[RMDB]
RNA sequence: GGGAACGACUCGAGUAGAGUCGAAAAUCAGAUCACCGGCCUCGCCCUUUCCCUUGGAACAAUGGUGGCGGGGGCUCUCAUCGCCGAGAUCGUGUUCAACUAUCCCGGGAUAGGGACCUAUAUGUUCCACACGUCUCAUAUUCGUAUGAGACGUGUGAAAAGAAACAACAACAACAAC
Reactivity to 2A3 in 0.01 (KOAc 150mM, MgCl2 10mM, bicine 150mM(pH8.5), 24C), signal-to-noise 3, nucleotides 027 to 126: u100c000a010g070a080u070c030a040c190c020g100g000c010c010u020c020g000c000c000c000u020u080u020c010c010c000u020u090g070g030a060a020c020a080a140u150g110g040u090g060g000c020g020g000g010g000g010c030u020c000u030c020a070u050c030g170c170c020g020a020g000a030u040c040g000u010g030u140u240c080a070a020c000u040a020u030c000c010c020g030g030g000a050u090a140g020g000g000a000c010c020u160a140u020a060u200g040u060u030c020
Reactivity to DMS in 0.01 (KOAc 150mM, MgCl2 10mM, bicine 150mM(pH8.5), 24C), signal-to-noise 3, nucleotides 027 to 126: u010c130a120g010a100u000c050a090c030c060g010g010c020c020u000c040g000c030c010c140u000u000u000c010c010c020u000u000g010g000a060a020c100a050a100u010g000g010u020g020g000c030g000g000g000g010g020c020u000c040u000c080a020u000c100g020c060c020g020a060g010a020u000c050g010u000g010u010u000c180a100a070c060u000a050u000c000c020c030g010g000g010a020u000a090g010g010g000a090c080c050u000a060u000a100u000g000u000u000c020